This 177-nucleotide RNA was probed chemically with 2A3 and DMS. Values are in units of 0.01, from 0 to 300, in steps of 10. Conditions: 150 mM KOAc, 10 mM MgCl2 and 150 mM bicine (pH 8.5), 24 C.
[RMDB]
RNA sequence: GGGAACGACUCGAGUAGAGUCGAAAAGUGGUCGAGUCCGAAGGACUGGGGUAGUGAAAUAAAGAGAGAGAGAGCUACCCCGUCUGUCAGUCACUCUCUGUCUGAUUCUCUCUCUCAAAGACCACAAGGUCCAUACGAUAUUCGUAUCGUAUGGACCAAAAGAAACAACAACAACAAC
Reactivity to 2A3 in 0.01 (KOAc 150mM, MgCl2 10mM, bicine 150mM(pH8.5), 24C), signal-to-noise 5, nucleotides 027 to 126: g040u040g030g020u030c020g020a020g050u030c050c030g090a160a100g070g020a010c100u120g000g010g010g000u000a000g030u010g130a080a060a040u210a080a290a000g030a000g000a000g000a000g000a000g000a000g000c010u000a000c010c000c010c000g000u030c000u010g060u030c020a020g000u000c030a030c070u120c030u000c030u050g040u030c030u050g030a120u110u010c000u000c000u000c000u000c000u000c000a000a040a040g020a020c010c000a030c050a110a050
Reactivity to DMS in 0.01 (KOAc 150mM, MgCl2 10mM, bicine 150mM(pH8.5), 24C), signal-to-noise 2, nucleotides 027 to 126: g000u030g010g000u000c030g020a090g010u000c030c020g000a070a170g030g030a050c020u040g000g010g000g000u000a030g030u030g020a110a150a070u030a080a080a060g000a000g010a010g000a010g010a030g010a180g000c030u000a020c020c010c010c000g000u000c080u020g010u010c100a070g010u000c030a050c090u000c080u000c020u000g020u000c000u050g030a100u020u010c010u000c000u040c000u030c020u000c040a120a050a130g000a030c110c010a010c030a090a120